RNA sequence: GGGAACGACUCGAGUAGAGUCGAAAAGACAAGAUCUCCUUCUCUCCAACGUUUUUGCCAACUCAUGAUUCUCCUAACCUGUGCUUGGAGAGACGUGGACCCAGAGUCAGAGGACCUCUGACUUCCAAAAACCCGUUUCGGUUCGCCGAAACGGGAAGCUAAUCUAAUCCUUCGGGAUUAGAUUAGCAAAAGAAACAACAACAACAAC
Reactivity to DMS in 0.01 (KOAc 150mM, MgCl2 10mM, bicine 150mM(pH8.5), 24C), signal-to-noise 1, nucleotides 027 to 156: g000a140c060a070a060g000a300u000c000u000c000c000u000u000c010u000c020u030c000c020a060a080c070g000u000u030u000u000u000g020c060c000a030a150c060u000c030a070u020g000a150u000u000c070u000c020c030u000a060a050c050c100u010g020u010g020c060u000u020g010g000a070g020a010g000a060c050g030u000g000g000a060c080c000c000a220g010a030g020u010c010a010g000a090g000g030a130c170c050u000c030u010g000a080c010u000u010c090c040a020a100a040a080a160c010c000c010g010u000u000u000c000g060g000u010u020c300g010c020c030g010a000a000a000c020g000g010g000a000a020
Reactivity to 2A3 in 0.01 (KOAc 150mM, MgCl2 10mM, bicine 150mM(pH8.5), 24C), signal-to-noise 4, nucleotides 027 to 156: g080a020c070a040a060g010a240u030c040u040c030c000u050u000c000u000c000u010c010c010a100a040c090g040u040u040u060u200u180g140c070c040a120a090c060u090c100a110u140g100a210u220u030c110u070c070c040u120a090a130c010c030u100g060u120g070c080u020u020g000g010a000g010a000g010a010c020g030u080g000g030a030c020c020c010a060g010a000g030u000c000a000g010a020g080g090a090c030c040u000c010u000g000a010c000u010u030c030c010a040a040a030a090a090c000c000c020g000u000u000u000c010g000g040u020u090c200g020c050c010g000a000a000a000c000g000g000g000a000a000
Source information: This 207-nucleotide RNA was probed chemically with DMS and 2A3. Source: RMDB library M2RFPK, as collected in RNAgym. The 2A3 profile rests on 2,220 reads. For DMS the reverse transcriptase was MarathonRT.